[RMDB]
An RNA of 177 nucleotides, treated with 2A3 and DMS and read out base by base.
Values cover nucleotides 27 to 126.
2A3 is a SHAPE reagent: it acylates the 2'-hydroxyl of flexible nucleotides of all four kinds.
The reactions ran in a buffer of 150 mM KOAc, 10 mM MgCl2 and 150 mM bicine (pH 8.5), at 24 C.
RNA sequence: GGGAACGACUCGAGUAGAGUCGAAAACUGAACUGAGUAAUUGUGUAGAUAACUUAACCGAUAAGACUGAUGAGCUAUACUCAUUGUGCCUGAUACUGUACUAAUCGCAAGAUUGGUGGACAAAAGAGCCUAGUACCAUAUUCGUAUGGUACUAGGCAAAAGAAACAACAACAACAAC
Reactivity to 2A3 in 0.01 (KOAc 150mM, MgCl2 10mM, bicine 150mM(pH8.5), 24C), signal-to-noise 5, nucleotides 027 to 126: c040u030g020a030a030c060u060g020a020g060u110a140a090u150u030g040u040g070u130a060g040a200u040a120a030c020u050u060a040a060c030c060g100a120u040a180a010g040a020c040u030g010a090u020g010a020g000c050u120a080u020a300c000u000c020a030u020u020g060u060g060c000c020u030g020a060u070a190c030u000g040u060a000c000u020a000a060u020c040g020c090a110a010g010a020u000u020g020g000u010g070g020a060c060a020a110a000a000g090a020
Reactivity to DMS in 0.01 (KOAc 150mM, MgCl2 10mM, bicine 150mM(pH8.5), 24C), signal-to-noise 4, nucleotides 027 to 126: c030u000g020a070a150c130u010g000a080g000u020a060a060u010u020g010u020g000u030a090g010a040u020a040a070c090u010u010a030a140c090c060g010a100u040a130a050g000a020c020u010g010a010u010g000a030g000c080u010a040u010a210c020u010c010a010u010u000g020u000g010c010c020u000g000a100u010a060c130u010g000u000a030c000u000a000a000u000c010g010c250a070a090g000a010u000u000g000g000u000g010g010a080c110a050a050a130a050g010a200